Chemical mapping of a 207-nucleotide RNA with 2A3 and DMS.
The reactions ran in a buffer of 150 mM KOAc, 10 mM MgCl2 and 150 mM bicine (pH 8.5), at 24 C.
The DMS profile rests on 1,766 reads.
The data come from the RNA Mapping Database (RMDB), library ARCHII.
2A3 adducts were read by reverse transcription with SuperScript II with manganese.
[RMDB]
RNA sequence: GGGAACGACUCGAGUAGAGUCGAAAAACCGGGAUUUCGAUCCCGGUAUAACCGGUUUCGUGGUCUAGUUGGUCAUGGCAUCUGCUUAACACGCAGAACGUCCCCAGUUCGAUCCUGGGCGAAAUCACCAUAUAAUACCUAAGUUCGCUUAGGUAAAGACUAAUCAUUCCUUCGGGAAUGAUUAGUCAAAAGAAACAACAACAACAAC
Reactivity to 2A3 in 0.01 (KOAc 150mM, MgCl2 10mM, bicine 150mM(pH8.5), 24C), signal-to-noise 3, nucleotides 027 to 156: a000c000c000g000g020g000a050u100u100u100c140g060a030u020c000c000c000g000g000u010a010u000a010a030c020c030g030g010u010u020u010c070g020u090g030g010u060c070u060a160g080u110u140g030g020u050c090a160u120g000g000c020a040u010c020u000g010c000u030u070a090a040c060a000c090g020c010a010g010a060a050c050g040u040c010c000c000c010a000g000u060u090c030g010a030u040c010c020u020g030g010g000c010g000a010a010a000u060c030a040c020c050a080u110a010u070a290a120u070a060c020c000u000a000a010g000u020u080c210g050c080u000u010a000g020g000u000a010a020a010
Reactivity to DMS in 0.01 (KOAc 150mM, MgCl2 10mM, bicine 150mM(pH8.5), 24C), signal-to-noise 1, nucleotides 027 to 156: a010c000c020g020g000g000a010u000u000u000c100g000a080u000c040c000c000g070g060u000a000u000a070a050c030c030g030g080u010u010u000c010g000u010g020g050u000c020u000a140g030u000u000g010g010u000c030a070u010g010g000c050a230u010c010u030g010c000u000u030a050a170c230a180c300g030c030a020g030a050a110c040g020u000c040c030c000c010a060g030u000u000c120g000a280u000c110c020u000g040g010g000c030g000a060a080a140u000c080a040c060c020a120u000a140u010a100a290u010a010c010c000u000a000a030g020u000u010c250g050c010u010u000a010g010g000u000a040a000a120